The record gives the reactivity of an RNA of 177 nucleotides to 2A3 and DMS.
The RNA was probed in 150 mM KOAc, 10 mM MgCl2 and 150 mM bicine (pH 8.5) at 24 C.
For DMS the reverse transcriptase was MarathonRT.
Source: RMDB library M2PK50, as collected in RNAgym.
For DMS, 1,515 sequencing reads were counted.
As a SHAPE reagent, 2A3 marks flexible, mostly unpaired nucleotides at the ribose 2'-OH.

RNA sequence: GGGAACGACUCGAGUAGAGUCGAAAAUCCAAGGGGUUCGCCCCUUGGAAAAUAAGGGAAACCGAGCUUUCCGGUCGACUCCGGAGAGCCAAAGUCAAAUAAAAACCGUUGGGUUCGCCCAACGGAACGAAGUACAUUUGUUCGCAAAUGUACUUCGAAAAGAAACAACAACAACAAC
Reactivity to 2A3 in 0.01 (KOAc 150mM, MgCl2 10mM, bicine 150mM(pH8.5), 24C), signal-to-noise 2, nucleotides 027 to 126: u000c020c000a000a000g000g010g000g030u040u080c140g090c000c000c000c000u000u010g000g000a000a000a000a000u050a010a020g040g000g030a060a050a040c040c030g000a020g000c000u000u000u000c000c040g040g040u090c170g160a070c090u010c030c000g000g000a010g010a000g020c030c010a040a030a010g070u080c060a030a140a110u150a130a160a040a060a100c000c000g000u000u000g020g000g010u040u050c210g080c030c000c000a000a000c010g000g000a010a000
Reactivity to DMS in 0.01 (KOAc 150mM, MgCl2 10mM, bicine 150mM(pH8.5), 24C), signal-to-noise 2, nucleotides 027 to 126: u010c000c000a000a000g000g000g000g000u000u010c270g000c010c000c000c000u000u000g000g010a020a030a080a030u020a110a060g020g000g000a100a180a210c020c040g010a160g000c000u000u000u000c010c000g000g020u000c170g000a130c140u000c010c010g000g010a020g000a000g000c000c060a030a050a060g030u020c140a070a120a100u000a060a070a100a130a080c000c010g000u000u000g010g010g000u000u000c150g000c000c010c000a000a010c000g000g000a020a060